Description:
The record gives the reactivity of an RNA of 177 nucleotides to DMS and 2A3. The 2A3 profile rests on 3,149 reads. For 2A3 the reverse transcriptase was SuperScript II with manganese. Source: RMDB library OK2TST, as collected in RNAgym.

[RMDB]
RNA sequence: GGGAACGACUCGAGUAGAGUCGAAAAGCGCGUAUCGUCAAUGCCAUCAGCCUGCCUGCCCAGUCGGCGGGAAAUCUGGUAGCUGGCGUUACCAUCGUCCAGCUCACGCAGUAAGGAGGCGUCAUGAUCUUUCACGGUUAUUCGUAACCGUGAAAGAAAAAGAAACAACAACAACAAC
Reactivity to DMS in 0.01 (KOAc 150mM, MgCl2 10mM, bicine 150mM(pH8.5), 24C), signal-to-noise 3, nucleotides 027 to 126: g000c080g010c080g040u000a050u000c050g010u000c050a090a100u000g010c020c020a090u000c110a080g000c050c070u000g000c020c010u000g000c000c020c100a150g040u000c170g000g000c000g010g000g000a020a080a030u010c030u000g010g010u000a030g010c000u000g010g000c030g010u000u010a110c180c160a100u010c040g000u000c000c010a020g000c010u000c110a040c060g010c010a020g020u010a130a090g000g010a090g000g020c020g030u010c090a080u000g000a110
Reactivity to 2A3 in 0.01 (KOAc 150mM, MgCl2 10mM, bicine 150mM(pH8.5), 24C), signal-to-noise 2, nucleotides 027 to 126: g050c010g010c000g050u060a030u130c020g050u050c050a100a050u090g050c010c020a080u040c010a040g010c010c020u050g000c000c000u070g010c000c050c010a110g270u260c040g020g000c000g000g000g020a030a020a030u040c010u020g020g020u020a010g000c010u000g010g000c010g000u000u080a090c050c010a060u100c010g120u010c000c010a010g000c010u010c000a020c010g250c010a010g000u030a040a090g040g030a020g000g080c030g020u020c010a060u120g090a090